[RMDB]
RNA sequence: GGGAACGACUCGAGUAGAGUCGAAAACCCGGCAUCGCCCAUGUGCUCGGGUCAGGGUCCUAAUCGAAGUGGGAUACGCUAAAUUUUUCCGUCUGUAAAAUUUAGAGGAGCUUACCAGACUAGCAAUACAGAAUGCCUGUCACUCGGCACGCUGUAAGAACAAAACACAGUUCGCUGUGUUUUGUUCAAAAGAAACAACAACAACAAC
Reactivity to 2A3 in 0.01 (KOAc 150mM, MgCl2 10mM, bicine 150mM(pH8.5), 24C), signal-to-noise 5, nucleotides 027 to 156: c000c000c000g000g000c000a000u000c010g020c000c000c010a000u010g010u010g000c160u160c150g010g000g010u050c080a140g190g040g060u060c010c010u110a150a100u160c150g140a150a020g010u010g000g010g010a010u010a000c000g000c010u000a000a020a010u010u010u010u010u000c010c040g000u000c000u000g010u000a010a010a020a030u000u020u010a000g000a010g010g000a060g180c070u130u060a040c030c000a010g000a010c000u020a060g030c110a140a140u030a080c000a000g020a060a020u020g010c000c020u180g090u260c060a090c200u110c070g000g000c010a000c030g010c010u010g000u020a060a090
Reactivity to DMS in 0.01 (KOAc 150mM, MgCl2 10mM, bicine 150mM(pH8.5), 24C), signal-to-noise 1, nucleotides 027 to 156: c000c010c020g010g050c040a010u000c020g020c050c020c040a050u000g030u000g030c020u010c010g060g020g030u000c010a120g030g010g040u040c050c020u000a030a110u010c180g000a130a130g030u000g000g010g000a050u000a100c010g000c010u010a020a000a040u000u000u000u000u000c030c070g010u000c070u000g030u000a060a000a000a000u000u000u000a000g000a050g020g000a120g030c050u000u000a020c040c010a270g000a060c040u020a150g030c090a110a120u000a100c070a060g030a030a060u000g010c010c020u000g020u010c140a110c170u000c110g000g020c020a030c100g000c000u000g020u000a070a190